[RMDB]
RNA sequence: GGGAACGACUCGAGUAGAGUCGAAAAUGUCCAGUCCCUCCCCGCUCCUGGAGAAGGGAGACUCGGGAACGCCUAGCAUCUGAGGGACGAAGCCGCCCCCGGGCGCUCCCCUCGGAGAUCCACUGGGACCAAUAACUUGAUUCGUCAAGUUAUUGGUAAAAGAAACAACAACAACAAC
Reactivity to DMS in 0.01 (KOAc 150mM, MgCl2 10mM, bicine 150mM(pH8.5), 24C), signal-to-noise 4, nucleotides 027 to 126: u020g000u000c020c060a120g000u010c020c030c010u000c020c020c010c180g000c030u000c010c010u000g000g020a120g000a200a190g010g000g010a050g010a080c130u010c100g000g000g010a060a090c160g010c030c010u000a100g010c120a110u000c030u000g010a040g000g010g000a150c100g010a060a300g000c060c050g010c040c030c010c100c170g000g010g010c010g010c040u000c030c000c010c010u010c000g010g000a020g000a070u000c080c110a100c020u000g000g000g010
Reactivity to 2A3 in 0.01 (KOAc 150mM, MgCl2 10mM, bicine 150mM(pH8.5), 24C), signal-to-noise 2, nucleotides 027 to 126: u070g020u010c010c000a000g080u030c010c000c000u000c000c000c000c000g010c010u000c010c030u080g150g100a220g050a170a070g030g040g010a010g010a020c050u020c070g000g010g040a040a040c020g040c010c000u010a020g020c020a070u020c020u020g030a030g020g010g030a040c040g010a040a010g080c050c030g040c020c000c000c010c030g030g020g000c030g010c030u010c000c000c030c000u020c010g000g000a020g010a020u040c040c010a050c030u030g000g000g020